[RMDB]
RNA sequence: GGGAACGACUCGAGUAGAGUCGAAAAGAUAUGGAGUGAACUACAGCCUAAGGAGCGAUGAAAUCGGAAACGAUGGAGCUCCGAAGGCUGCACUCCUAAGUCAAAGACCAUCGUUCGCGAUGGUCAACUCGAAACUAGAGUUCGCUCUAGUUUCGAGAAAAGAAACAACAACAACAAC
Reactivity to 2A3 in 0.01 (KOAc 150mM, MgCl2 10mM, bicine 150mM(pH8.5), 24C), signal-to-noise 2, nucleotides 027 to 126: g040a030u090a080u150g000g000a010g020u000g000a120a050c080u200a080c290a000g000c000c000u020a060a040g000g000a000g030c040g210a300u070g010a060a060a010u020c020g000g070a110a040a030c010g020a010u020g050g000a010g000c000u020c000c000g000a010a000g000g010c000u000g000c000a010c000u000c000c000u040a130a020g060u000c040a080a050a100g000a020c000c000a000u000c040g030u070u090c300g020c000g170a010u000g000g030u000c000a000a020
Reactivity to DMS in 0.01 (KOAc 150mM, MgCl2 10mM, bicine 150mM(pH8.5), 24C), signal-to-noise 2, nucleotides 027 to 126: g010a060u000a300u010g020g020a010g000u010g000a080a030c070u020a300c020a030g020c000c000u060a030a300g010g000a000g030c000g010a110u020g000a060a110a010u000c000g000g000a140a020a160c000g000a010u000g010g010a100g000c010u000c000c000g000a090a010g000g000c010u000g000c000a010c020u000c010c000u000a010a100g030u000c030a100a110a170g000a000c000c000a000u000c000g010u000u020c270g000c000g020a010u000g000g000u000c000a010a060
This 177-nucleotide RNA was probed chemically with 2A3 and DMS.
Conditions: 150 mM KOAc, 10 mM MgCl2 and 150 mM bicine (pH 8.5), 24 C.
It was measured as part of the RMDB library TTRDEL.
DMS adducts were read by reverse transcription with MarathonRT.